Chemical mapping of a 177-nucleotide RNA with 2A3 and DMS. For DMS the reverse transcriptase was MarathonRT. The RNA was probed in 150 mM KOAc, 10 mM MgCl2 and 150 mM bicine (pH 8.5) at 24 C. Values cover nucleotides 27 to 126. For DMS, 1,465 sequencing reads were counted. It was measured as part of the RMDB library OK2TST. Values are in units of 0.01, from 0 to 300, in steps of 10. For 2A3, 995 sequencing reads were counted.

RNA sequence: GGGAACGACUCGAGUAGAGUCGAAAAGCGGAGAACAUCCAGGCGGCCGAGUCCCGGAUCCGCGAUGUGGACAUGGCCUCGGAGAUGGUGGAGUACGUGAAAAACCAGAUCCUUACCCAGGCCAACAUGAUACCGAGAAUUUCGAUUCUCGGUAUCAAAAAGAAACAACAACAACAAC
Reactivity to 2A3 in 0.01 (KOAc 150mM, MgCl2 10mM, bicine 150mM(pH8.5), 24C), signal-to-noise 1, nucleotides 027 to 126: g060c040g030g030a050g010a200a000c000a010u000c020c020a060g090g040c000g050g060c050c070g040a060g030u060c000c010c000g000g000a040u020c000c010g000c060g030a070u080g100u160g070g070a050c020a180u100g000g000c000c010u060c090g030g010a060g010a020u040g000g020u030g010g050a180g100u110a100c080g070u160g160a090a090a010a020a010c010c000a010g000a080u060c000c000u010u080a080c020c010c000a010g010g010c050c000a040a000c030a090
Reactivity to DMS in 0.01 (KOAc 150mM, MgCl2 10mM, bicine 150mM(pH8.5), 24C), signal-to-noise 3, nucleotides 027 to 126: g000c040g040g000a150g000a160a090c140a090u000c030c090a050g010g010c080g010g000c060c000g000a090g010u010c020c020c020g020g000a080u000c000c010g020c010g000a050u010g010u020g010g000a080c140a090u030g020g000c030c020u000c180g000g020a090g000a120u000g000g020u020g020g000a230g030u010a080c140g040u010g010a050a050a080a200a070c020c050a110g000a210u000c020c010u000u010a180c090c020c030a120g000g010c010c020a040a110c160a080